[RMDB]
RNA sequence: GGGAACGACUCGAGUAGAGUCGAAAAGAAAGAAAGAAAGAAGCCGGCUCUGCUAGUAUCACGGCAACCACGUUGAAAUUACAACGAAAGAAGCUCGCACUCAACUUCAACGGCUUAACGAGUGCAAAAAAGAAGUAUCACUUCGGUGAUACUUCAACUACAUCCUAUGCUUCGGCAUAGGAUGUAGAAAAGAAACAACAACAACAAC
Reactivity to 2A3 in 0.01 (KOAc 150mM, MgCl2 10mM, bicine 150mM(pH8.5), 24C), signal-to-noise 1, nucleotides 027 to 156: g020a000a030a000g070a010a120a000g030a050a130a020g080a040a010g070c200c110g100g000c100u050c060u040g100c020u010a040g050u070a050u130c050a010c110g020g000c000a010a150c000c000a010c030g000u000u000g040a000a130a200u180u140a090c010a000a010c000g080a100a070a070g040a030a010g010c080u160c230g000c010a000c000u000c020a040a040c000u010u010c030a080a060c030g010g000c000u050u040a040a000c020g000a000g000u030g000c000a030a000a010a000a060a000g000a000a000g000u000a000u000c000a000c000u000u130c300g030g030u010g000a000u000a000c000u000u000c000a000a000